Structure probing data (2A3 and DMS) for a 207-nucleotide construct.
DMS adducts were read by reverse transcription with MarathonRT.
The RNA was probed in 150 mM KOAc, 10 mM MgCl2 and 150 mM bicine (pH 8.5) at 24 C.
It was measured as part of the RMDB library OK3TST.
RNA sequence: GGGAACGACUCGAGUAGAGUCGAAAAAGGUGACCCCUGACCUCGACGGGUUCUACCGAGAGCUGAAGGCGGCUGUCGAGGCCGCCGAGAAGAUGAAGGUCCACAUCCCGGUCGAGCCGGACAUGGGGAACUUCCGGCAGGAGGUGGCGGCCAGCACCGAAGUAGUUCAUUUCGAUGAACUACUUCGAAAAGAAACAACAACAACAAC
Reactivity to 2A3 in 0.01 (KOAc 150mM, MgCl2 10mM, bicine 150mM(pH8.5), 24C), signal-to-noise 1, nucleotides 027 to 156: a040g110g040u110g100a190c020c000c000c030u030g070a030c040c010u010c040g070a030c020g020g020g000u020u030c030u080a040c020c000g030a060g030a040g120c040u030g020a040a000g010g010c010g030g000c040u050g110u260c090g010a070g000g030c000c000g010c000c020g000a000g000a000a010g010a010u100g010a040a060g010g020u010c010c010a030c010a030u050c000c000c030g030g110u050c030g030a020g060c030c020g050g040a050c030a070u150g000g000g000g000a000a000c000u050u030c020c010g040g000c050a030g010g010a020g030g020u030g030g040c040g020g000c010c060a010g000c020a020c010
Reactivity to DMS in 0.01 (KOAc 150mM, MgCl2 10mM, bicine 150mM(pH8.5), 24C), signal-to-noise 1, nucleotides 027 to 156: a070g000g020u010g010a150c040c000c020c020u020g030a120c090c000u000c040g030a170c070g020g000g020u000u000c030u000a100c000c010g010a090g000a160g000c030u010g010a150a260g000g000c010g030g000c000u000g000u030c220g010a260g010g000c010c000g040c000c000g000a080g020a130a100g010a090u000g000a150a130g010g010u000c020c050a090c000a110u000c040c000c000g000g010u000c050g020a190g020c030c010g010g020a030c040a070u000g030g000g050g000a130a080c030u000u000c010c020g030g010c090a090g000g000a100g040g030u000g010g000c050g000g040c010c010a160g030c020a170c040